Description: Chemical mapping of a 177-nucleotide RNA with DMS and 2A3. For 2A3, 17,205 sequencing reads were counted. For DMS the reverse transcriptase was MarathonRT. Reactivities are given for positions 27 through 126. The data come from the RNA Mapping Database (RMDB), library OK1LIB.

RNA sequence: GGGAACGACUCGAGUAGAGUCGAAAAUUUCGGGGCUCACGAACGGUUCGCAUUACGUGAUCGACACGUCGCGCAACGGCGCCGGACCCGCGCCCGACGCCCCGCUCAACUGGUGUAACCCCAGCGGCGGACAACAAUAAUUCGUUAUUGUUGUCCGAAAAGAAACAACAACAACAAC
Reactivity to DMS in 0.01 (KOAc 150mM, MgCl2 10mM, bicine 150mM(pH8.5), 24C), signal-to-noise 8, nucleotides 027 to 126: u010u030u020c010g000g010g010g020c020u010c080a150c130g010a080a120c160g000g020u010u000c030g000c150a110u020u010a030c040g000u010g010a290u040c190g000a170c060a040c030g010u010c210g000c020g010c070a110a140c200g000g010c020g010c020c020g000g010a040c030c020c050g000c170g000c110c070c050g000a050c200g000c020c000c000c020g000c120u010c060a090a080c030u010g000g000u000g000u010a080a160c110c040c010c020a020g010c170g010g020
Reactivity to 2A3 in 0.01 (KOAc 150mM, MgCl2 10mM, bicine 150mM(pH8.5), 24C), signal-to-noise 9, nucleotides 027 to 126: u100u110u080c030g000g000g020g010c030u050c050a070c050g080a160a030c050g050g030u060u050c030g020c080a070u120u220a050c020g010u030g070a200u180c100g090a100c030a010c050g030u040c020g000c000g010c060a130a150c120g200g000c000g010c010c000g040g000a050c010c020c000g010c040g010c010c040c000g010a020c060g010c000c010c000c000g010c020u050c020a100a100c030u030g000g000u050g040u090a040a050c030c000c000c010a020g000c020g070g000